The data come from the RNA Mapping Database (RMDB), library OK1LIB. Structure probing data (DMS and 2A3) for a 177-nucleotide construct. The DMS profile rests on 6,244 reads. For 2A3 the reverse transcriptase was SuperScript II with manganese.
[RMDB]
RNA sequence: GGGAACGACUCGAGUAGAGUCGAAAAGAUAAUCACCAACAGCCCAAUGGGGGUGUGCUGGAUAACAACGCCUCCGCGCGGCAGGCGGUCCUGGCGCUCCCGGCCCCGUACCAUGAUCGCGCGGGUGCCUCGUAUUGCAAUUCGUUGCAAUACGAGGAAAAGAAACAACAACAACAAC
Reactivity to DMS in 0.01 (KOAc 150mM, MgCl2 10mM, bicine 150mM(pH8.5), 24C), signal-to-noise 4, nucleotides 027 to 126: g010a050u000a060a070u000c120a060c040c000a120a130c070a110g000c020c050c050a180a140u010g020g010g010g000g040u010g000u030g010c080u010g020g000a070u030a100a100c140a100a140c070g000c040c010u010c000c000g020c050g010c090g000g000c080a060g000g000c080g010g010u000c050c060u040g000g010c010g000c040u000c010c000c050g010g010c030c010c000c020g010u030a040c050c050a070u010g010a090u010c070g050c040g010c010g000g020g000u010g000
Reactivity to 2A3 in 0.01 (KOAc 150mM, MgCl2 10mM, bicine 150mM(pH8.5), 24C), signal-to-noise 7, nucleotides 027 to 126: g060a030u140a070a080u100c090a020c070c010a020a050c040a070g040c010c010c030a080a160u280g040g000g000g000g060u100g040u040g100c060u040g010g090a110u090a230a080c100a070a020c060g020c010c010u040c000c010g000c010g000c020g010g000c000a010g010g010c010g000g010u060c020c050u060g010g000c020g000c040u050c000c000c000g020g010c010c000c000c010g060u080a130c020c050a180u120g050a220u090c030g000c010g000c010g010g010g010u050g020